[RMDB]
RNA sequence: GGGAACGACUCGAGUAGAGUCGAAAAGAAAGGGACCCCUGCCAUGGGAGCGUCGGUCAGCACCCCACGCAUAUUUUUUUAUGCCGCUGACACCCCUCGACGCAGCAGGAGGGGUGGUCCCGAAAGACAUAAUACCAUCCUUCGGGAUGGUAUUAUGAAAAGAAACAACAACAACAAC
Reactivity to 2A3 in 0.01 (KOAc 150mM, MgCl2 10mM, bicine 150mM(pH8.5), 24C), signal-to-noise 3, nucleotides 027 to 126: g050a050a090a030g010g010g000a020c020c020c010c030u070g090c020c020a230u100g070g070g080a180g020c000g010u010c030g050g000u000c000a000g000c000a110c020c060c030c000a020c010g000c010a010u030a080u060u180u060u030u020u010u010a010u010g020c030c040g000c010u000g000a010c010a060c040c050c010c020u020c020g040a030c020g010c030a020g090c020a020g030g080a040g020g010g000g040u070g020g030u020c000c000c000g010a010a010a000g030a000
Reactivity to DMS in 0.01 (KOAc 150mM, MgCl2 10mM, bicine 150mM(pH8.5), 24C), signal-to-noise 6, nucleotides 027 to 126: g010a090a140a160g000g010g010a030c010c000c010c020u000g010c020c050a150u010g000g010g000a180g010c010g010u000c030g020g010u000c010a020g020c020a150c120c030c030c040a100c240g010c000a000u000a000u000u000u020u010u010u000u000a000u000g000c010c120g010c010u000g010a030c010a180c040c050c040c050u010c010g000a040c050g010c030a140g000c090a090g000g010a080g000g010g010g010u010g000g000u000c000c010c000g010a050a070a080g010a220